[RMDB]
RNA sequence: GGGAACGACUCGAGUAGAGUCGAAAAAGAUGGCAGGUUCACCCCGUACGGUGCGGAAGUUCGCGCUUCCGUGAAACGGGAAAAUCGGACGGUGGCUGCAAGUCGCAUCGCAAAACCGCGGCAAGUGUUAACCUGGACCUCUUCGGAGGUCCAGGAAUACUUCUUCGAAGUUCGCUUCGAAGAAGUAAAAAGAAACAACAACAACAAC
Reactivity to 2A3 in 0.01 (KOAc 150mM, MgCl2 10mM, bicine 150mM(pH8.5), 24C), signal-to-noise 1, nucleotides 027 to 156: a000g140a040u160g040g000c020a010g110g020u110u130c020a020c000c000c000c000g000u020a030c060g010g050u140g060c000g010g020a010a030g020u130u300c080g010c030g000c050u000u000c000c000g010u020g030a080a110a020c060g000g000g050a100a000a000a070u100c060g030g000a010c050g030g030u040g010g010c030u040g020c030a030a040g000u010c030g000c050a060u020c050g000c130a020a080a030a080c050c030g010c000g030g000c020a070a090g040u030g000u210u110a030a030c000c000u000g000g000a000c010c000u030c020u060u070c140g020g000a010g040g010u000c000c010a000g000g000a000a000
Reactivity to DMS in 0.01 (KOAc 150mM, MgCl2 10mM, bicine 150mM(pH8.5), 24C), signal-to-noise 1, nucleotides 027 to 156: a050g020a080u010g030g040c020a070g000g000u000u000c020a110c130c000c040c010g000u010a050c060g010g010u000g000c010g000g000a010a030g040u000u000c270g010c300g040c030u010u000c010c000g020u010g000a010a110a150c020g010g030g020a140a010a020a060u000c030g000g000a070c000g010g000u010g030g030c010u000g020c050a050a090g010u000c040g010c050a090u000c110g020c070a070a060a120a110c100c100g000c060g040g000c020a110a090g020u000g030u000u000a080a120c000c000u000g000g010a050c000c010u000c010u000u000c290g000g000a020g030g040u000c010c010a010g000g000a010a000
Structure probing data (2A3 and DMS) for a 207-nucleotide construct. It was measured as part of the RMDB library M2RFPK. For 2A3, 832 sequencing reads were counted. 2A3 is a SHAPE reagent: it acylates the 2'-hydroxyl of flexible nucleotides of all four kinds. The reactions ran in a buffer of 150 mM KOAc, 10 mM MgCl2 and 150 mM bicine (pH 8.5), at 24 C.